[RMDB]
The record gives the reactivity of an RNA of 177 nucleotides to DMS.
For DMS the reverse transcriptase was MarathonRT.
DMS (dimethyl sulfate) methylates the pairing face of unpaired adenines and cytosines.
Values are in units of 0.01, from 0 to 300, in steps of 10.

RNA sequence: GGGAACGACUCGAGUAGAGUCGAAAAGGAAACCCUCGAUCAUACCCUCCACGGCGGCUCUGACCGCCUCGGGAUCCAGCUCACGGACGAGGUCGAGGUACGCGUGCAGCCGCCUCACGACGUCCUCAGGUGGAUAACCAUUCGUGGUUAUCCACCUAAAAGAAACAACAACAACAAC
Reactivity to DMS in 0.01 (KOAc 150mM, MgCl2 10mM, bicine 150mM(pH8.5), 24C), signal-to-noise 1, nucleotides 027 to 126: g000g010a100a050a090c130c030c020u000c050g000a060u020c050a170u020a220c060c040c010u020c040c050a180c210g000g000c010g010g000c010u000c220u010g020a090c050c020g010c000c000u010c120g000g020g000a040u010c060c040a040g010c100u010c080a140c120g000g040a070c080g020a110g020g000u010c050g000a020g010g010u000a020c130g020c070g000u010g040c140a170g030c010c050g010c090c020u010c030a020c010g010a230c030g000u010c010c010u000c160